[RMDB]
RNA sequence: GGGAACGACUCGAGUAGAGUCGAAAACGAUGUGUAAUGACAACAUCAAAGUUUGGCCCAUGCUUCUUUAACCUGUGUAUCAUGGCAUCUUUACCCUAACAUGCAUGCUUAAAGCACCAAGGGGACGCAUACCGGCGAUUUUCGAAUCGCCGGUAUGAAAAGAAACAACAACAACAAC
Reactivity to DMS in 0.01 (KOAc 150mM, MgCl2 10mM, bicine 150mM(pH8.5), 24C), signal-to-noise 5, nucleotides 027 to 126: c040g020a100u000g020u000g010u010a110a100u040g030a140c250a070a040c020a020u010c020a090a070a200g010u010u000u000g000g060c020c000c020a100u000g010c060u000u000c030u010u010u000a210a150c020c010u000g030u010g000u000a090u010c110a050u000g010g010c040a030u010c070u010u000u010a100c090c030c100u020a070a110c240a060u010g010c110a040u010g000c070u020u010a120a120a150g000c050a030c040c160a100a070g000g000g010g010a080c300g010
Reactivity to 2A3 in 0.01 (KOAc 150mM, MgCl2 10mM, bicine 150mM(pH8.5), 24C), signal-to-noise 5, nucleotides 027 to 126: c030g010a020u000g040u000g020u070a220a140u240g200a070c030a060a020c000a060u040c020a000a100a070g020u010u050u080g070g010c000c000c000a010u030g010c020u020u060c000u030u130u040a070a070c000c020u050g010u010g020u080a030u130c020a040u050g090g000c000a020u020c020u020u090u160a140c010c000c010u040a050a030c010a050u070g030c020a020u030g010c010u050u160a080a040a070g040c010a020c050c010a100a060g050g000g030g000a000c060g000